[RMDB]
RNA sequence: GGGAACGACUCGAGUAGAGUCGAAAAGAUCGGAUGGGAAGAGUAUAUCCCAUGGGAAUCCCUGGGUUCCCCUCGUGUCCAGCCCCUCCCCGGUCCGAUGGAAGGGGGACUCCGGGACACCUUGCAUAGCCGCCUACCUUCGGGUAGGCGAAAAGAAACAACAACAACAAC
Reactivity to 2A3 in 0.01 (KOAc 150mM, MgCl2 10mM, bicine 150mM(pH8.5), 24C), signal-to-noise 5, nucleotides 027 to 129: g040a060u050c040g020g040a020u030g020g040g040a060a020g090a040g140u120a060u010a030u140c010c000c000a020u070g000g010g020a050a100u030c010c000c010u010g010g000g000u010u030c000c030c010c000u020c020g160u130g050u000c000c020a020g000c040c020c030c010u030c010c000c000c030g020g020u050c030c040g030a080u120g060g070a040a020g020g010g000g000g030a000c000u030c010c030g000g000g000a020c020a020c010c000u030u090g050c050a090u070a040g030c000
Reactivity to DMS in 0.01 (KOAc 150mM, MgCl2 10mM, bicine 150mM(pH8.5), 24C), signal-to-noise 2, nucleotides 027 to 129: g020a040u030c080g000g000a070u050g000g000g000a050a110g020a150g030u040a150u050a080u140c050c030c020a090u020g020g000g000a100a090u010c030c020c010u050g000g000g040u030u000c000c000c000c000u010c040g020u050g000u010c000c070a080g020c060c030c040c060u040c000c000c000c000g010g030u030c040c170g010a090u070g000g050a090a050g000g000g000g000g000a060c030u040c010c100g020g040g000a030c110a070c040c020u010u100g000c010a040u000a060g020c100
The data come from the RNA Mapping Database (RMDB), library 15KLIB. Structure probing data (2A3 and DMS) for a 170-nucleotide construct. The reactions ran in a buffer of 150 mM KOAc, 10 mM MgCl2 and 150 mM bicine (pH 8.5), at 24 C. For 2A3 the reverse transcriptase was SuperScript II with manganese. The DMS profile rests on 10,297 reads. Reactivities are given for positions 27 through 129. DMS adducts were read by reverse transcription with MarathonRT.